[RMDB]
RNA sequence: GGGAACGACUCGAGUAGAGUCGAAAACGUGUCGAAGGGUUGUCUUCGUCACCAACACACACAGUUAUAAUAACUGGCAAAGAAAACAAUAAUUUCGCAGUAGCUGCGUAAUAGCACUCUGCAUCGCCUAACGGUAUCUCCUAUGUACCGUUAACGCCCUAUGCCCUUUGUUCGCAAAGGGCAUAGGAAAAGAAACAACAACAACAAC
Reactivity to 2A3 in 0.01 (KOAc 150mM, MgCl2 10mM, bicine 150mM(pH8.5), 24C), signal-to-noise 5, nucleotides 027 to 156: c030g000u010g020u020c000g000a000a000g000g060g050u070u050g040u060c000u000u010c000g020u000c000a010c020c040a150a080c050a010c010a000c010a010c010a070g000u040u040a190u080a300a160u150a050a060c020u020g050g000c050a060a090a040g120a060a130a020a010c090a030a070u160a190a110u070u210u180c080g000c000a010g030u300a000g030c200u020g000c010g030u080a030a050u040a090g000c000a000c010u000c000u010g000c010a010u110c060g040c010c000u000a000a000c000g020g000u010a030u060c150u100c040c040u090a090u300g010u000a010c000c000g010u000u000a050a060c030g020c010
Reactivity to DMS in 0.01 (KOAc 150mM, MgCl2 10mM, bicine 150mM(pH8.5), 24C), signal-to-noise 1, nucleotides 027 to 156: c060g030u010g010u000c000g030a030a040g000g000g020u010u020g050u000c000u000u000c010g020u000c000a030c000c050a100a080c090a200c060a150c140a180c000a080g060u000u000a160u010a130a250u000a040a040c010u000g010g000c030a080a070a130g000a080a100a080a180c040a070a150u000a090a300u000u000u010c060g000c000a010g020u020a080g000c100u020g010c010g000u000a080a130u000a230g020c000a030c040u000c010u030g000c000a050u010c050g000c060c080u010a030a020c000g020g020u000a020u000c180u030c210c050u000a070u010g030u000a000c000c000g020u000u000a020a030c060g000c100